[RMDB]
RNA sequence: GGGAACGACUCGAGUAGAGUCGAAAAAGUGCCUCCACCAGCUUGGCGAUCUGACCGCUCUGGGGAUGCAAGUGGGCGGACCACAGUUUCCGCUCGGUAAUCAGACGCUGCUUGUGCUGCUGCUGCAGCGUCCGUAAAUCUUCGGAUUUACGGACGCAAAAGAAACAACAACAACAAC
Reactivity to 2A3 in 0.01 (KOAc 150mM, MgCl2 10mM, bicine 150mM(pH8.5), 24C), signal-to-noise 3, nucleotides 027 to 126: a020g130u040g030c010c000u030c010c020a230c060c010a050g030c020u160u160g040g000c010g080a180u050c120u150g120a110c020c020g030c030u030c030u060g020g010g000g030a010u060g000c020a060a050g120u160g030g010g020c040g020g000a000c000c040a150c110a180g000u020u070u000c000c000g010c000u010c000g030g040u110a070a040u090c030a010g040a070c020g010c030u030g000c000u100u150g070u070g060c030u020g040c020u020g000c010u030g020c040a030
Reactivity to DMS in 0.01 (KOAc 150mM, MgCl2 10mM, bicine 150mM(pH8.5), 24C), signal-to-noise 5, nucleotides 027 to 126: a100g020u010g000c000c030u010c010c010a130c050c020a030g000c300u000u000g010g000c030g020a120u000c050u000g010a110c080c020g020c020u000c030u000g020g000g000g010a040u010g000c030a060a100g020u010g000g010g000c030g010g000a060c140c160a090c240a150g000u010u000u000c000c010g000c010u000c020g000g010u000a070a110u010c070a100g000a060c050g000c020u000g000c030u010u010g000u000g010c060u000g010c060u000g020c040u000g010c080a090
Source information
Structure probing data (2A3 and DMS) for a 177-nucleotide construct. The reactions ran in a buffer of 150 mM KOAc, 10 mM MgCl2 and 150 mM bicine (pH 8.5), at 24 C. Source: RMDB library OK2TST, as collected in RNAgym.